[RMDB]
RNA sequence: GGGAACGACUCGAGUAGAGUCGAAAACGUGCCUUCAUGCUAAGGGUUUGAUAUCUGCUAAAACCCGGUGCAUUCAUCAAUGCAGGUUAAGCCAAAGGGAUGUCCCGACCGGGGGCCGACAAUCCAGAUAGCUCAAGAAUGUUCGCAUUCUUGAGAAUACUGAACUUAUGUUCGCAUAAGUUCAGUAAAAAGAAACAACAACAACAAC
Reactivity to DMS in 0.01 (KOAc 150mM, MgCl2 10mM, bicine 150mM(pH8.5), 24C), signal-to-noise 4, nucleotides 027 to 156: c050g020u000g010c000c000u010u000c070a080u010g020c040u000a300a150g010g010g000u000u000u000g000a190u000a060u000c050u010g030c070u000a140a040a020a050c010c010c020g020g030u010g020c030a050u000u000c060a040u000c090a100a170u000g000c030a060g010g010u000u000a060a130g020c020c030a020a120a110g000g000g010a120u000g000u000c000c000c000g010a120c040c060g010g020g010g020g020c030c030g000a090c070a090a120u000c040c010a190g000a140u000a100g030c000u000c000a000a020g000a040a010u000g000u000u000c300g030c000a040u000u010c010u000u000g010a000g000a050a090
Reactivity to 2A3 in 0.01 (KOAc 150mM, MgCl2 10mM, bicine 150mM(pH8.5), 24C), signal-to-noise 5, nucleotides 027 to 156: c050g050u080g020c010c010u070u100c050a060u090g040c030u080a040a080g000g000g000u020u010u020g060a060u050a070u110c060u040g030c040u070a050a030a060a090c010c020c000g000g000u010g010c000a050u070u140c030a050u080c060a140a120u100g010c020a010g040g040u060u140a070a030g030c030c050a120a030a040g050g000g010a060u070g040u040c000c020c020g030a040c050c020g030g000g000g000g000c000c000g020a020c050a040a050u030c040c000a030g050a210u120a050g040c000u010c000a000a000g000a000a020u020g010u030u050c110g020c130a000u000u000c000u000u000g000a010g000a000a000

About this RNA: The record gives the reactivity of an RNA of 207 nucleotides to DMS and 2A3. The RNA was probed in 150 mM KOAc, 10 mM MgCl2 and 150 mM bicine (pH 8.5) at 24 C. For DMS the reverse transcriptase was MarathonRT.